[RMDB]
RNA sequence: GGGAACGACUCGAGUAGAGUCGAAAAUGGGCAUCCGCAAGCGGCAGCCCUUCCAGGAGGGCUUCAGGAUCACCUACGAGGACCUGGAGGGGGGCAACAUCCCCGCGCUCCUGGAUGUGGAGGCCUACCAGGAUAGCUUGAAGGAAGAAGAGGCGGGGCUGUUCUAUGAAUUCGUUCAUAGAACAGCAAAAGAAACAACAACAACAAC
Reactivity to 2A3 in 0.01 (KOAc 150mM, MgCl2 10mM, bicine 150mM(pH8.5), 24C), signal-to-noise 1, nucleotides 027 to 156: u160g000g000g010c000a000u000c000c020g050c080a140a000g060c020g040g000c010a010g020c000c000c040u000u010c020c000a010g010g010a000g020g070g110c060u030u000c000a010g010g000a190u090c050a160c040c000u050a100c200g100a150g050g010a060c000c000u020g000g010a080g020g020g000g000g010g090c080a060a030c040a170u290c000c000c000c030g050c020g030c030u030c000c000u000g020g020a010u030g000u190g000g020a000g000g000c000c000u000a040c000c050a040g030g000a010u020a050g010c010u000u010g030a020a010g020g000a000a000g000a010a020g030a010g050g050c220g020g030g040
An RNA of 207 nucleotides, treated with 2A3 and read out base by base. The reactions ran in a buffer of 150 mM KOAc, 10 mM MgCl2 and 150 mM bicine (pH 8.5), at 24 C. Reactivities are given for positions 27 through 156.